Overview: Source: RMDB library OK1LIB, as collected in RNAgym. This 177-nucleotide RNA was probed chemically with DMS and 2A3. The reactions ran in a buffer of 150 mM KOAc, 10 mM MgCl2 and 150 mM bicine (pH 8.5), at 24 C. The 2A3 profile rests on 19,267 reads. DMS adducts were read by reverse transcription with MarathonRT.
RNA sequence: GGGAACGACUCGAGUAGAGUCGAAAAUCUUGUAGGUAUGGUAAAUGGAGUAUCGCCGGCAUCUCCAGGAGGAAACGUAGCUGUAGUUUUGAGUAAUGUAAGUACAGGAGUGUUAUCGGCACUCCCAACUUUAUAGUUUGUUCGCAAACUAUAAAGUAAAAGAAACAACAACAACAAC
Reactivity to DMS in 0.01 (KOAc 150mM, MgCl2 10mM, bicine 150mM(pH8.5), 24C), signal-to-noise 9, nucleotides 027 to 126: u010c040u000u010g020u000a050g000g020u010a030u010g010g010u010a040a080a080u010g000g010a050g020u020a040u020c090g010c040c040g010g000c070a060u010c020u010c030c020a060g010g020a100g010g010a060a080a070c080g010u010a070g020c040u010g010u010a040g010u000u000u010u020g010a090g000u010a050a070u020g010u010a040a110g020u010a050c150a130g000g000a020g020u000g010u000u020a100u030c200g010g010c020a020c020u000c000c000c120a050
Reactivity to 2A3 in 0.01 (KOAc 150mM, MgCl2 10mM, bicine 150mM(pH8.5), 24C), signal-to-noise 9, nucleotides 027 to 126: u030c030u030u070g050u070a060g050g040u080a070u140g040g060u120a070a100a090u100g030g010a030g030u100a050u160c050g010c050c010g020g010c010a050u030c020u010c020c020a020g040g070a040g000g060a080a060a010c050g030u080a040g020c040u040g030u100a060g030u050u030u070u120g070a060g030u100a060a070u130g070u130a090a100g040u030a060c030a040g000g010a010g010u020g020u050u100a170u220c060g040g000c000a000c000u000c010c000c000a020